This 177-nucleotide RNA was probed chemically with 2A3 and DMS.
RNA sequence: GGGAACGACUCGAGUAGAGUCGAAAAUGGAUGGAAUUAAAGCUGGGUUUGUAGUGAGCCAUUAGGAUUAUGGCAAAUGUCUAGUGUACAGAAUUCAGUGUAGGCCGGGAGUUGAGACUGGUGUGUGUGCCCUAUGCAUAUUCGUAUGCAUAGGGCAAAAAGAAACAACAACAACAAC
Reactivity to 2A3 in 0.01 (KOAc 150mM, MgCl2 10mM, bicine 150mM(pH8.5), 24C), signal-to-noise 1, nucleotides 027 to 126: u080g000g020a020u130g010g020a060a010u050u110a110a130a000g030c000u020g000g030g000u000u000u030g000u000a160g060u030g100a060g000c000c000a020u050u060a060g230g010a070u080u000a040u130g010g030c010a000a010a010u150g040u090c030u110a070g020u000g020u070a010c010a040g120a000a050u010u110c000a000g060u020g000u090a010g000g020c030c000g010g000g000a040g000u020u140g040a000g040a050c050u010g010g000u050g020u010g000u020g000
Reactivity to DMS in 0.01 (KOAc 150mM, MgCl2 10mM, bicine 150mM(pH8.5), 24C), signal-to-noise 4, nucleotides 027 to 126: u000g010g000a040u020g000g010a070a070u040u010a090a080a130g000c030u010g010g010g030u000u010u000g020u000a070g010u010g010a160g030c020c010a020u000u020a090g020g010a100u040u040a060u020g020g020c060a030a060a110u030g010u000c060u010a070g010u000g000u010a050c080a050g030a070a060u000u020c080a030g010u020g010u000a070g000g000c050c010g000g010g000a100g030u000u030g010a040g000a140c110u000g010g020u000g010u000g040u020g050
Source: RMDB libraries RFM100 and RFMREP, as collected in RNAgym. For 2A3 the reverse transcriptase was SuperScript II with manganese. For 2A3, 729 sequencing reads were counted. For DMS the reverse transcriptase was MarathonRT. Reactivities are given for positions 27 through 126.